[RMDB]
RNA sequence: GGGAACGACUCGAGUAGAGUCGAAAAAACUCUUUAAGGCAAUAACGAACUAAUUCUAAGCAAGUAAUGGAGAAAUGCCAGGGUAACUAUCUAGCCAUAAUAGUGCUUGACAGUAUGAUACUAACUGAAUAUGGUAAACCGUUCGCGGUUUACCAAAGAUAAUACACGACUUCGGUCGUGUAUUAUCAAAAGAAACAACAACAACAAC
Reactivity to 2A3 in 0.01 (KOAc 150mM, MgCl2 10mM, bicine 150mM(pH8.5), 24C), signal-to-noise 3, nucleotides 027 to 156: a000a020c160u150c060u090u150u020a120a010g030g000c040a100a110u110a090a040c120g030a030a010c040u070a080a100u110u020c050u110a120a050g040c050a050a020g050u120a080a000u120g060g030a010g010a040a040a080u060g010c020c010a000g000g040g000u040a040a000c010u000a020u060c010u010a000g000c010c000a050u050a260a040u060a210g090u090g050c050u020u010g000a000c000a000g020u030a030u100g090a030u060a060c030u070a150a140c000u030g060a090a120u200a080u140g000g030u010a020a000a010c010c000g020u040u030c080g000c030g080g040u020u000u010a000c000c000a000a000a000
Reactivity to DMS in 0.01 (KOAc 150mM, MgCl2 10mM, bicine 150mM(pH8.5), 24C), signal-to-noise 1, nucleotides 027 to 156: a030a060c040u010c030u000u010u000a040a060g040g030c050a060a090u000a060a070c070g000a150a110c020u000a060a060u000u010c040u020a070a110g000c050a050a090g010u020a100a060u000g000g000a160g020a060a050a090u000g020c030c020a110g000g000g030u000a070a060c010u000a060u000c010u010a130g010c030c050a130u010a060a070u000a030g000u010g040c000u000u010g010a060c020a020g030u010a070u010g020a130u000a110c090u010a040a040c060u040g030a060a090u000a140u000g010g000u000a010a010a020c000c000g010u000u000c270g050c030g030g020u010u000u000a000c000c000a020a020a030
The record gives the reactivity of an RNA of 207 nucleotides to 2A3 and DMS. Values are in units of 0.01, from 0 to 300, in steps of 10. Conditions: 150 mM KOAc, 10 mM MgCl2 and 150 mM bicine (pH 8.5), 24 C. As a SHAPE reagent, 2A3 marks flexible, mostly unpaired nucleotides at the ribose 2'-OH. It was measured as part of the RMDB library M2RFPK. The 2A3 profile rests on 1,199 reads.